[RMDB]
Chemical mapping of a 177-nucleotide RNA with 2A3. Reactivities are given for positions 27 through 126. For 2A3 the reverse transcriptase was SuperScript II with manganese. The reactions ran in a buffer of 150 mM KOAc, 10 mM MgCl2 and 150 mM bicine (pH 8.5), at 24 C.
RNA sequence: GGGAACGACUCGAGUAGAGUCGAAAACUAUUUAUAGACAGAACAGUGGAAAACGUAUAUCGCUAUAAACCUUAAACUCCGAAUCUUCCAGUCGUACUAUUCCACAUAGGCGAGGCAUAAGCGAAAGCCCGGUGAUAGGGUUCGCCCUAUCACCGGGAAAAGAAACAACAACAACAAC
Reactivity to 2A3 in 0.01 (KOAc 150mM, MgCl2 10mM, bicine 150mM(pH8.5), 24C), signal-to-noise 1, nucleotides 027 to 126: c000u060a150u070u080u000a170u170a150g060a040c090a020g100a300a000c030a070g120u070g090g000a300a000a000a040c000g010u000a040u000a000u100c000g000c000u020a030u010a060a040a030c010c000u110u030a030a030a030c000u000c010c000g120a000a000u160c000u000u000c010c000a000g030u000c000g000u010a080c090u000a040u120u000c220c060a070c010a100u090a010g050g100c020g030a010g020g000c070a010u130a160a000g040c040g120a040a000a000g060